[RMDB]
RNA sequence: GGGAACGACUCGAGUAGAGUCGAAAAGAAAAGAAGGAGGCCGUAGUAGAUCAGUGGUGACGAAAGUCAACUCCAUAGGUCACCUCCGCCUCUGAUCCGUAUUAUGGCCGAUGGAGGUGGAGAGAAAGGCUUAUCUAUACUUCGGUAUAGAUAAGCCAAAAGAAACAACAACAACAAC
Reactivity to 2A3 in 0.01 (KOAc 150mM, MgCl2 10mM, bicine 150mM(pH8.5), 24C), signal-to-noise 3, nucleotides 027 to 126: g030a000a100a000a000g040a020a020g050g030a020g000g020c010c000g020u020a020g060u010a030g060a010u030c050a000g010u010g050g000u000g010a000c050g050a110a080a050g020u020c010a010a050c030u090c090c000a070u120a160g000g050u080c040a000c000c000u030c010c000g000c000c000u000c020u050g090a040u000c000c040g060u030a130u250u070a100u240g080g000c000c000g000a010u010g010g010a010g000g000u020g010g010a050g000a030g000a010a030a000
Reactivity to DMS in 0.01 (KOAc 150mM, MgCl2 10mM, bicine 150mM(pH8.5), 24C), signal-to-noise 3, nucleotides 027 to 126: g000a080a020a090a080g000a140a040g010g030a100g000g020c040c000g040u030a080g010u040a090g000a020u020c050a120g050u000g010g010u030g020a030c000g000a150a060a140g010u000c010a050a110c130u010c030c040a080u020a070g020g000u010c020a150c080c010u000c000c020g010c000c020u000c020u000g010a020u010c030c200g000u000a120u010u060a120u030g020g010c100c080g000a090u020g000g030a020g010g000u000g020g020a040g000a070g010a060a110a080
Chemical mapping of a 177-nucleotide RNA with 2A3 and DMS. High 2A3 reactivity points to a flexible backbone, as in loops and unpaired stretches. The RNA was probed in 150 mM KOAc, 10 mM MgCl2 and 150 mM bicine (pH 8.5) at 24 C. For DMS the reverse transcriptase was MarathonRT.